[RMDB]
RNA sequence: GGGAACGACUCGAGUAGAGUCGAAAAAGACCUGGUCGCGUUCCGCGACAGCGACGGCCGCGUGGGCAUCGUGGACCGCUAUUGCCCGCACCGCCGCGCGUCGCUCGUGUUCGGUCGCAACGAGGACGCCCGUAUCGAUGUUCGCAUCGAUACGGGCAAAAGAAACAACAACAACAAC
Reactivity to DMS in 0.01 (KOAc 150mM, MgCl2 10mM, bicine 150mM(pH8.5), 24C), signal-to-noise 1, nucleotides 027 to 126: a170g000a180c010c000u000g000g030u000c040g010c010g000u000u010c060c040g050c150g010a000c010a020g010c000g010a070c000g010g020c080c190g000c050g030u000g030g000g030c010a010u030c200g010u010g000g000a110c060c140g020c150u000a090u030u000g020c020c000c030g000c040a090c190c110g010c010c120g000c030g020c070g010u000c000g000c020u000c070g050u020g000u000u000c000g000g000u010c010g020c020a090a050c000g000a020g010g000a150c050
Reactivity to 2A3 in 0.01 (KOAc 150mM, MgCl2 10mM, bicine 150mM(pH8.5), 24C), signal-to-noise 2, nucleotides 027 to 126: a000g100a040c010c030u070g070g040u020c020g000c020g050u170u040c040c060g010c010g020a020c020a010g030c000g160a230c000g010g020c040c020g000c020g010u070g000g000g000c000a000u010c060g020u080g070g150a060c090c050g030c080u060a070u050u250g040c000c000c010g010c010a050c010c030g050c020c030g020c030g020c010g010u000c020g050c010u000c040g030u060g050u030u090c030g010g000u030c010g000c030a050a040c020g090a040g000g040a020c070